[RMDB]
RNA sequence: GGGAACGACUCGAGUAGAGUCGAAAAUAGCCGAACAUAGAUGCUUUCAUUUCACAUAUAGUGGUUUGGUCUGGUAAAAGGAUCAUACUUCUCAUCCAAGGAAAACAUGCAUUAUCUCUUGUAUUGCCACAUUUUCUUUGCGGAGGUAAAAGGGAUAGCUUUGGUAUACCUUCGGGUAUACCAAAGCAAAAGAAACAACAACAACAAC
Reactivity to 2A3 in 0.01 (KOAc 150mM, MgCl2 10mM, bicine 150mM(pH8.5), 24C), signal-to-noise 1, nucleotides 027 to 156: u100a010g000c000c010g010a040a040c040a080u160a090g100a080u060g030c030u150u070u090c060a040u080u090u040c020a110c140a040u170a000u030a040g040u040g010g000u010u010u010g000g000u010c010u040g000g100u190a080a100a110a140g060g000a010u010c000a010u040a010c000u060u020c010u010c060a080u060c060c020a120a040g000g030a120a080a040a000c050a030u130g000c000a100u010u040a050u100c040u000c040u000u060g090u060a070u010u070g080c050c000a010c000a080u040u100u100u040c110u040u210u060g020c050g040g000a040g010g050u060a050a050a030a060g000g000g070a020u020a040
Chemical mapping of a 207-nucleotide RNA with 2A3. Values cover nucleotides 27 to 156. The RNA was probed in 150 mM KOAc, 10 mM MgCl2 and 150 mM bicine (pH 8.5) at 24 C. For 2A3 the reverse transcriptase was SuperScript II with manganese.